Record summary
Conditions: 150 mM KOAc, 10 mM MgCl2 and 150 mM bicine (pH 8.5), 24 C. The record gives the reactivity of an RNA of 177 nucleotides to 2A3 and DMS. For DMS the reverse transcriptase was MarathonRT. It was measured as part of the RMDB library OK2TST. The 2A3 profile rests on 1,659 reads.
RNA sequence: GGGAACGACUCGAGUAGAGUCGAAAAGCCGAGCAACUGCACGGAAAAGACAUGUCCUACAACAACUUCACCGAUGCGGACGCAGCCUGGCGGGCCGCCUUCGACCACGAACAAACGUGCGUGGCGAAAUAGAGCCUUGUUUCGACAAGGCUCUAUUAAAAGAAACAACAACAACAAC
Reactivity to 2A3 in 0.01 (KOAc 150mM, MgCl2 10mM, bicine 150mM(pH8.5), 24C), signal-to-noise 2, nucleotides 027 to 126: g000c000c000g000a030g010c020a040a210c060u110g040c000a000c030g000g060a040a140a050a000g040a030c060a140u060g030u000c050c020u220a020c020a080a000c000a030a020c020u060u030c040a050c060c000g210a220u070g020c000g000g050a030c030g000c020a010g050c030c020u100g050g000c000g050g000g000c000c020g020c000c000u010u050c040g190a270c020c010a000c000g040a060a030c030a130a250a010c100g000u040g040c000g010u010g020g020c000g000a010
Reactivity to DMS in 0.01 (KOAc 150mM, MgCl2 10mM, bicine 150mM(pH8.5), 24C), signal-to-noise 2, nucleotides 027 to 126: g000c000c000g020a110g020c020a160a170c130u000g020c010a010c020g010g000a090a080a080a030g010a070c160a120u020g010u010c020c010u000a070c110a080a040c050a040a100c090u000u000c120a130c030c010g000a120u000g010c020g000g000a070c070g010c060a090g010c060c040u000g000g010c020g000g020g010c060c060g030c020c170u000u000c000g000a140c020c010a000c020g000a020a060c040a090a060a090c220g020u000g000c010g010u000g000g000c020g000a010